[RMDB]
RNA sequence: GGGAACGACUCGAGUAGAGUCGAAAAGGCGUGAAGGGCUUCGUCGAGUACAUCAACAAGACGAAGAGCGUGCUGCACCCGACGAUCUUCCACAUCAACGGCGAGAAGGAUAGCGUGGGCGUGGAAAGAUCAUCAGCCUCUUCGGAGGCUGAUGAUCAAAAGAAACAACAACAACAAC
Reactivity to DMS in 0.01 (KOAc 150mM, MgCl2 10mM, bicine 150mM(pH8.5), 24C), signal-to-noise 1, nucleotides 027 to 126: g020g000c020g010u010g000a270a020g030g000g020c030u000u000c010g020u000c010g010a300g000u010a060c230a090u030c280a050a030c050a000a250g010a030c030g000a020a020g000a110g010c180g000u010g010c000u000g000c080a170c000c020c000g010a090c070g040a020u000c020u010u000c000c000a040c030a060u000c020a080a030c080g000g000c120g030a180g000a130a130g000g000a120u000a110g000c060g050u000g010g000g010c060g010u000g000g000a020a050a080
Reactivity to 2A3 in 0.01 (KOAc 150mM, MgCl2 10mM, bicine 150mM(pH8.5), 24C), signal-to-noise 1, nucleotides 027 to 126: g000g030c060g000u090g110a110a130g140g070g030c000u010u000c000g030u000c010g030a020g030u040a040c080a300u190c050a010a050c010a060a020g000a010c010g000a010a010g000a030g000c030g010u100g060c000u040g000c000a020c000c010c010g000a050c030g010a010u040c020u030u000c000c000a030c020a040u030c010a030a110c070g190g040c000g060a090g100a160a090g220g000a160u120a000g010c000g010u060g010g000g000c040g000u020g050g050a030a060a040